Conditions: 150 mM KOAc, 10 mM MgCl2 and 150 mM bicine (pH 8.5), 24 C. Chemical mapping of a 177-nucleotide RNA with DMS and 2A3. For 2A3 the reverse transcriptase was SuperScript II with manganese. It was measured as part of the RMDB library TTRDES. For DMS the reverse transcriptase was MarathonRT. Values cover nucleotides 27 to 126. Values are in units of 0.01, from 0 to 300, in steps of 10.

RNA sequence: GGGAACGACUCGAGUAGAGUCGAAAAGAUAUGGACGUCGUUAGGCUUUGAUCUAUGGGUCGGAAACGACCCUGUAGGGAGCCUUUCGACGUCCUAAGUCAAACGACAAAUGUUCGCAUUUGUCGAACUUAGAUCUACUGUUCGCAGUAGAUCUAAGAAAAGAAACAACAACAACAAC
Reactivity to DMS in 0.01 (KOAc 150mM, MgCl2 10mM, bicine 150mM(pH8.5), 24C), signal-to-noise 4, nucleotides 027 to 126: g000a030u000a080u000g000g000a010c000g020u000c000g030u000u000a000g040g020c010u000u010u010g010a020u020c000u010a030u000g010g000g030u000c000g010g000a020a020a060c000g020a010c000c000c000u000g010u000a010g000g000g000a010g030c010c000u000u000u000c000g010a000c000g030u000c000c000u000a000a060g010u000c010a140a140a300c020g000a020c000a000a010a010u000g010u000u020c290g030c010a020u000u000u010g000u000c000g010a060a110
Reactivity to 2A3 in 0.01 (KOAc 150mM, MgCl2 10mM, bicine 150mM(pH8.5), 24C), signal-to-noise 2, nucleotides 027 to 126: g010a000u000a000u050g000g000a010c000g010u020c010g010u010u010a000g020g000c020u300u300u040g010a020u030c000u010a040u100g000g020g000u000c000g010g000a020a020a010c000g010a000c030c040c020u020g000u020a000g010g000g020a000g010c010c000u000u000u010c000g000a000c000g010u020c000c010u000a000a000g010u000c000a010a010a030c030g010a000c000a000a010a000u040g040u090u140c300g000c190a000u000u010u030g010u010c010g010a040a000